[RMDB]
RNA sequence: GGGAACGACUCGAGUAGAGUCGAAAACUAGAUUCGUUUGGAAGUACGUAACACAUGUUCGGCCGGAUGAACGUCGAAUUCUCGGGAACUAUGAAAGCAAGAGAGAAUGCUAUAGUUGAGUUCCCUGAUAAAUCCUGCGAUUCGUCGCAGGAUUUAUAAAAGAAACAACAACAACAAC
Reactivity to DMS in 0.01 (KOAc 150mM, MgCl2 10mM, bicine 150mM(pH8.5), 24C), signal-to-noise 2, nucleotides 027 to 126: c070u020a050g000a170u010u000c020g000u000u000u000g020g000a000a070g000u020a030c040g020u000a060a090c160a100c210a140u010g000u010u020c020g040g060c000c030g000g000a040u000g030a020a080c090g000u020c040g010a020a110u030u000c000u000c010g040g000g030a070a040c030u010a070u010g000a130a040a060g010c030a010a070g010a280g040a150g000a160a040u000g020c000u000a060u000a090g020u000u000g000a100g020u000u000c000c000c000u010g010
Reactivity to 2A3 in 0.01 (KOAc 150mM, MgCl2 10mM, bicine 150mM(pH8.5), 24C), signal-to-noise 2, nucleotides 027 to 126: c020u000a040g060a300u100u050c030g050u010u000u080g080g020a000a100g060u160a040c000g020u130a250a000c080a000c000a060u270g000u030u000c000g030g000c020c000g110g000a080u000g030a030a000c040g030u000c020g020a040a030u110u020c040u020c030g000g010g020a020a020c000u000a000u060g120a210a030a040g000c000a050a000g060a000g000a000g030a220a070u020g060c000u020a010u000a050g040u000u030g050a000g010u000u000c000c030c000u000g010